An RNA of 177 nucleotides, treated with DMS and 2A3 and read out base by base. Source: RMDB library M2PK50, as collected in RNAgym.
[RMDB]
RNA sequence: GGGAACGACUCGAGUAGAGUCGAAAAGGAAUGUGCUUCGGCACAUUCCAAAAGAAAGCCAGACGGCGAACGCCAAACGCUGACGAACCAAAAUCGAAGGUAAAACCCACCGGUUCGCCGGUGGGAACUAAACAAGCAUGUUCGCAUGCUUGUUUAGAAAAGAAACAACAACAACAAC
Reactivity to DMS in 0.01 (KOAc 150mM, MgCl2 10mM, bicine 150mM(pH8.5), 24C), signal-to-noise 5, nucleotides 027 to 126: g010g010a020a010u000g020u000g010c020u000u010c170g030g000c000a000c000a010u010u000c000c000a020a020a060a120g000a080a120a090g010c010c020a070g020a180c130g010g010c000g010a040a080c130g000c040c030a040a160a160c210g000c010u000g010a200c050g010a090a090c040c030a070a070a100a070u000c110g010a080a140g000g000u010a040a040a140a120c000c000c000a010c020c010g000g010u000u010c190g010c000c000g010g010u000g000g000g020a000a030
Reactivity to 2A3 in 0.01 (KOAc 150mM, MgCl2 10mM, bicine 150mM(pH8.5), 24C), signal-to-noise 4, nucleotides 027 to 126: g000g000a010a000u020g000u020g000c020u080u100c240g010g010c000a000c000a010u010u000c000c000a000a000a000a010g000a020a030a010g030c020c010a030g050a080c080g020g020c030g040a180a020c070g030c030c000a080a060a020c040g000c040u040g020a010c020g010a050a080c030c050a070a050a010a120u160c090g070a110a040g100g000u100a040a050a070a140c010c010c000a010c000c010g000g060u050u040c290g030c080c010g000g000u000g010g000g000a000a010
DMS adducts were read by reverse transcription with MarathonRT. The RNA was probed in 150 mM KOAc, 10 mM MgCl2 and 150 mM bicine (pH 8.5) at 24 C.